[RMDB]
RNA sequence: GGGAACGACUCGAGUAGAGUCGAAAAGAUAUGGAGACUAUCAGCAACAGCUAUACAUCGGAAACGAUGUGAUAGACAUGCUGGUAGUCUCCUAAGUCAAAGCUCUAACGCUUCGGCGUUAGAGCAAGUAGCUUAUCCACUUCGGUGGAUAAGCUACAAAAGAAACAACAACAACAAC
Reactivity to DMS in 0.01 (KOAc 150mM, MgCl2 10mM, bicine 150mM(pH8.5), 24C), signal-to-noise 1, nucleotides 027 to 126: g010a050u000a000u000g000g000a020g010a020c010u000a010u000c010a020g040c000a140a050c290a090g000c000u000a000u000a020c000a000u020c010g030g000a010a000a020c000g030a040u000g010u010g000a020u010a020g000a040c100a170u020g000c010u000g000g040u000a000g010u000c000u020c000c000u010a000a070g000u000c000a170a180a120g010c000u010c010u000a010a000c000g040c020u000u010c230g040g010c000g000u000u000a000g000a000g040c010a010a040